Background:
Chemical mapping of a 177-nucleotide RNA with 2A3 and DMS.

RNA sequence: GGGAACGACUCGAGUAGAGUCGAAAACAUGACUAGGCACGUACCAUGCUAGACGACGUACAGCAUGAUCUAGGCUAGGACUCUAGGUCACUAGGCUGAUCCGAGCAGCGUACAGCUAGACUAGACGUGCUCCACACCUCUUCGGAGGUGUGGAGCAAAAAGAAACAACAACAACAAC
Reactivity to 2A3 in 0.01 (KOAc 150mM, MgCl2 10mM, bicine 150mM(pH8.5), 24C), signal-to-noise 1, nucleotides 027 to 126: c000a100u240g030a050c050u090a150g010g090c010a010c060g010u000a130c000c070a070u120g000c000u020a060g010a090c010g010a000c100g030u070a060c050a030g000c030a050u030g010a000u020c120u140a010g000g100c000u080a090g080g000a040c020u160c100u130a040g080g070u020c070a070c300u030a070g130g050c040u000g040a150u060c010c050g060a060g000c050a000g010c010g000u050a040c000a050g010c010u010a060g040a100c010u050a050g100a080c040g000
Reactivity to DMS in 0.01 (KOAc 150mM, MgCl2 10mM, bicine 150mM(pH8.5), 24C), signal-to-noise 1, nucleotides 027 to 126: c100a110u020g030a070c130u000a120g000g060c010a100c080g030u000a030c030c070a090u010g000c000u000a030g010a300c030g010a050c130g000u000a150c190a010g010c000a210u010g000a030u000c000u030a030g060g000c020u000a000g010g000a100c020u000c100u020a160g000g000u000c030a050c030u000a010g000g010c000u050g010a010u000c010c050g000a090g010c000a120g000c070g020u000a020c030a070g050c030u000a010g010a050c060u000a070g020a050c120g000
It was measured as part of the RMDB library OK2TRN. For DMS the reverse transcriptase was MarathonRT. The reactions ran in a buffer of 150 mM KOAc, 10 mM MgCl2 and 150 mM bicine (pH 8.5), at 24 C.